[RMDB]
RNA sequence: GGGAACGACUCGAGUAGAGUCGAAAACGUGAGUGGAAACCUCGUUCUUUAUUGGGGAGUACACUCGAGGAGUGGAAGGCGGGGAGGGCGGGGAGGAGUGUUACCCCACGGGAACUGCUGAGUGCCCAUCACUGCCCCUUCGGGGGCAGUAAAAGAAACAACAACAACAAC
Reactivity to 2A3 in 0.01 (KOAc 150mM, MgCl2 10mM, bicine 150mM(pH8.5), 24C), signal-to-noise 2, nucleotides 027 to 129: c000g000u040g020a000g020u030g000g000a000a000a000c000c000u000c100g050u300u220c170u230u300u080a180u110u180g000g020g000g020a000g000u020a000c000a020c000u000c020g000a000g000g000a100g000u130g050g050a220a000g000g000c010g000g000g010g020a060g000g040g000c040g020g000g030g030a000g000g000a020g000u040g010u020u030a070c040c020c000c000a000c000g000g020g000a010a060c040u010g090c030u050g060a030g070u020g000c000c000c000a040u070c040
Reactivity to DMS in 0.01 (KOAc 150mM, MgCl2 10mM, bicine 150mM(pH8.5), 24C), signal-to-noise 3, nucleotides 027 to 129: c050g060u070g000a000g000u050g000g000a170a190a110c000c000u110c090g010u000u010c290u130u200u000a070u070u030g050g000g050g000a080g030u000a050c000a000c010u000c010g000a160g040g000a080g000u030g010g010a060a000g000g000c000g050g000g060g070a000g010g010g000c140g010g090g060g100a040g000g000a300g040u300g000u000u000a160c070c000c040c090a080c070g000g000g000a130a060c050u110g000c050u110g020a060g030u070g010c030c000c000a060u000c050